[RMDB]
RNA sequence: GGGAACGACUCGAGUAGAGUCGAAAAAUACAAGGGGAGGUUUCGGCCAAAUGUUGUAUGCAGAAAUCGUGAGGAAGGUAGCACUUAGACACUCACGAGUAGCGGUUCGGCAGUAGUGCUAAAAUGAGACAGUACGAAAAGUUCGCUUUUCGUACAACCUAAGUGUUCACUUCGGUGAACACUUAGGAAAAGAAACAACAACAACAAC
Reactivity to 2A3 in 0.01 (KOAc 150mM, MgCl2 10mM, bicine 150mM(pH8.5), 24C), signal-to-noise 3, nucleotides 027 to 156: a000u160a010c030a080a050g030g010g010g000a040g060g020u030u030u110c090g020g020c060c010a070a070a110u100g010u040u010g000u060a070u030g010c000a010g080a050a100a070u010c030g000u020g010a000g020g000a100a020g060g000u040a010g060c030a010c030u050u050a040g030a050c030a000c040u010c000a000c000g000a010g000u040a020g000c060g000g020u080u080c050g040g000c000a000g050u080a030g000u020g010c000u030a000a020a060a170u110g000a040g020a060c090a080g010u000a000c000g020a000a000a000a010g030u030u110c130g050c110u010u000u000u000c000g000u010a000c000a000a000
Reactivity to DMS in 0.01 (KOAc 150mM, MgCl2 10mM, bicine 150mM(pH8.5), 24C), signal-to-noise 1, nucleotides 027 to 156: a140u010a050c050a060a100g030g000g030g000a070g030g000u000u000u000c040g010g010c000c030a020a110a120u020g020u000u000g000u000a060u020g000c050a120g000a030a040a120u000c010g010u020g010a040g010g020a180a090g040g010u000a090g010c050a060c040u000u030a090g010a150c050a130c010u000c000a020c020g020a040g000u010a080g010c020g020g020u000u010c030g030g040c000a050g020u000a040g020u000g020c020u010a040a050a020a060u030g010a130g000a070c050a080g030u000a000c000g000a000a010a020a020g040u000u010c300g020c000u000u010u000u000c020g080u010a020c010a030a110